An RNA of 207 nucleotides, treated with 2A3 and DMS and read out base by base. The reactions ran in a buffer of 150 mM KOAc, 10 mM MgCl2 and 150 mM bicine (pH 8.5), at 24 C. DMS adducts were read by reverse transcription with MarathonRT.

[RMDB]
RNA sequence: GGGAACGACUCGAGUAGAGUCGAAAAACACGAUCACACGAACUCGAGAGUGUGUUCUCGAGAACACACACUCACGUACACACUCGAGUGUGAGAACACGAGUACUCACGAGUACGUGAACGAGUUCGUGUACUCGUACGUACGUACUCUCGAGUACGUGCUCCAUUUUUUUCGAAAAAUGGAGCACAAAAGAAACAACAACAACAAC
Reactivity to 2A3 in 0.01 (KOAc 150mM, MgCl2 10mM, bicine 150mM(pH8.5), 24C), signal-to-noise 7, nucleotides 027 to 156: a000c080a010c040g060a080u110c070a010c010a000c050g020a050a010c000u010c010g100a100g000a060g100u010g000u000g030u030u010c100u080c120g300a300g020a060a010c020a000c000a000c000a010c030u030c010a000c010g030u040a010c100a010c010a020c060u080c080g100a090g030u090g010u040g030a070g020a040a010c060a010c080g040a030g040u080a060c030u040c080a030c060g010a030g010u000a000c000g010u010g010a020a020c020g020a010g010u000u010c010g000u010g000u000a000c010u000c000g000u030a040c060g050u060a010c020g010u030a030c010u000c000u010c030g010a000g010u050a040c050
Reactivity to DMS in 0.01 (KOAc 150mM, MgCl2 10mM, bicine 150mM(pH8.5), 24C), signal-to-noise 2, nucleotides 027 to 156: a060c080a060c020g040a090u000c020a050c000a030c020g040a080a120c000u000c000g020a090g010a150g000u020g010u000g010u000u000c030u000c240g000a220g010a010a090c040a060c060a040c050a110c070u000c010a030c040g010u010a050c030a150c090a100c040u000c040g040a120g000u000g010u000g010a130g000a110a100c030a140c050g000a120g010u000a080c060u000c090a090c070g000a170g010u020a010c000g010u010g000a050a100c010g000a070g020u020u000c070g070u000g020u000a000c020u000c020g000u020a080c120g020u000a070c010g040u000a110c020u000c040u000c070g010a040g000u000a030c020